[RMDB]
RNA sequence: GGGAACGACUCGAGUAGAGUCGAAAAACGCUUCACAAUGUGCGGCAAAGAAACAUUGUUUAUGCAAAGGCACUUCGCAAUGUGUGCUCAAACAUUGCUUAUUCAAACAAGCUUCACAAUGUGCGACAAAACUUCACGGUCUUCGGACCGUGAAGAACCAUCAUCAAAUCUUCGGAUUUGAUGAUGGAAAAGAAACAACAACAACAAC
Reactivity to 2A3 in 0.01 (KOAc 150mM, MgCl2 10mM, bicine 150mM(pH8.5), 24C), signal-to-noise 9, nucleotides 027 to 156: a000c020g000c020u030u020c010a000c010a000a030u010g000u000g000c010g050g030c100a140a090a060g090a030a070a000c010a020u000u010g100u040u070u100a110u120g040c050a050a060a070g140g000c010a000c010u060u070c070g020c060a040a050u050g020u010g030u020g030c060u110c170a040a060a010c020a020u010u020g000c000u070u080a140u100u120c070a020a070a090c030a090a050g020c010u090u080c040a020c030a150a160u140g030u040g050c030g060a050c090a020a080a030a050c000u000u000c000a000c000g000g000u000c000u030u050c080g100g000a000c000c000g000u000g000a000a000g000a000a010
Reactivity to DMS in 0.01 (KOAc 150mM, MgCl2 10mM, bicine 150mM(pH8.5), 24C), signal-to-noise 2, nucleotides 027 to 156: a060c050g010c000u010u030c020a040c030a030a030u010g030u010g020c040g010g060c020a110a110a120g010a040a040a060c000a010u000u010g000u000u000u000a050u010g010c030a050a150a130g000g000c030a050c020u000u020c140g050c120a150a080u000g000u000g000u000g030c020u000c050a050a150a040c030a030u000u000g000c010u000u010a070u000u010c110a070a070a120c070a070a120g000c030u020u010c020a050c060a030a080u000g030u000g000c080g000a120c090a030a080a080a100c000u010u000c010a000c010g000g030u000c010u010u000c300g040g010a030c010c010g030u010g010a010a000g000a070a110

About this RNA: Chemical mapping of a 207-nucleotide RNA with 2A3 and DMS. The data come from the RNA Mapping Database (RMDB), library M2RFPK. For DMS the reverse transcriptase was MarathonRT. The DMS profile rests on 4,078 reads. Conditions: 150 mM KOAc, 10 mM MgCl2 and 150 mM bicine (pH 8.5), 24 C.